Structure probing data (2A3 and DMS) for a 177-nucleotide construct.
For 2A3 the reverse transcriptase was SuperScript II with manganese.
The RNA was probed in 150 mM KOAc, 10 mM MgCl2 and 150 mM bicine (pH 8.5) at 24 C.
DMS adducts were read by reverse transcription with MarathonRT.
RNA sequence: GGGAACGACUCGAGUAGAGUCGAAAAGCUCGAUCCUUUUGGGACCGGAUCCUCAGCCCCCAGCCCCCCGGGACUCAUCAGGAUCGGGCCUUUCGCAAGACUUGAGUUCCGACCUUUUUCGAGCUGGGUAGGCUCAAGAAUUCGUUCUUGAGCCUACAAAAGAAACAACAACAACAAC
Reactivity to 2A3 in 0.01 (KOAc 150mM, MgCl2 10mM, bicine 150mM(pH8.5), 24C), signal-to-noise 3, nucleotides 027 to 126: g010c000u000c000g000a000u000c000c000u000u010u020u010g010g010g020a020c000c010g010g010a050u070c000c050u100c060a050g010c000c000c000c000c000a010g020c000c000c000c000c000c000g020g000g110a230c010u000c000a010u010c000a000g000g000a000u000c000g000g000g000c010c010u010u010u000c000g000c020a070a040g080a080c000u000u010g000a000g010u160u020c000c000g000a020c000c000u020u030u000u040u190c100g030a060g020c040u080g070g070
Reactivity to DMS in 0.01 (KOAc 150mM, MgCl2 10mM, bicine 150mM(pH8.5), 24C), signal-to-noise 1, nucleotides 027 to 126: g010c000u000c000g000a000u000c000c020u000u000u000u000g160g000g000a300c000c000g020g000a130u000c150c000u000c110a120g000c040c020c000c040c040a030g020c150c000c000c160c000c020g030g000g000a000c040u000c000a000u000c070a010g080g030a030u020c000g000g010g000c000c000u000u000u000c000g040c000a050a030g000a010c000u000u000g000a010g010u050u020c000c000g000a300c000c000u010u090u060u000u100c090g000a110g000c020u050g050g000